An RNA of 177 nucleotides, treated with DMS and 2A3 and read out base by base. It was measured as part of the RMDB library OK1LIB. For DMS, 3,431 sequencing reads were counted. Reactivities are given for positions 27 through 126. The RNA was probed in 150 mM KOAc, 10 mM MgCl2 and 150 mM bicine (pH 8.5) at 24 C.
RNA sequence: GGGAACGACUCGAGUAGAGUCGAAAAGAAAACAAGUACCGAGAACAUUGUUUUCGCUGCUUGGCGUUGCCGUUUUGUGUUGCAGUUGGUUGGGUAACGCCGCAAAUACCAACGGCAGAGACAGAUACACCGCAGUAGUAUUCGUACUACUGCGGUGAAAAGAAACAACAACAACAAC
Reactivity to DMS in 0.01 (KOAc 150mM, MgCl2 10mM, bicine 150mM(pH8.5), 24C), signal-to-noise 2, nucleotides 027 to 126: g020a110a040a180a300c000a020a000g000u000a030c240c040g000a050g000a010a010c010a180u070u060g000u000u000u000u000c020g010c160u000g000c010u000u000g000g030c030g000u000u000g020c030c020g000u020u010u040u020g040u030g010u010u000g010c010a080g010u000u010g010g000u000u000g010g000g010u010a070a060c190g000c010c010g010c040a040a070a090u020a010c020c050a010a010c000g000g000c030a030g000a130g020a050c090a000g010a150u020a120
Reactivity to 2A3 in 0.01 (KOAc 150mM, MgCl2 10mM, bicine 150mM(pH8.5), 24C), signal-to-noise 3, nucleotides 027 to 126: g030a000a020a000a000c010a000a000g000u040a040c020c060g020a020g010a040a050c060a300u180u280g000u000u000u000u000c000g000c040u040g000c010u020u070g010g000c000g010u000u020g030c010c020g040u050u050u110u020g260u020g030u070u040g030c030a020g000u010u030g040g000u080u160g080g010g000u050a040a000c020g020c010c000g000c000a010a060a020u180a020c000c010a020a000c000g010g020c020a020g050a020g040a090c040a030g120a030u090a070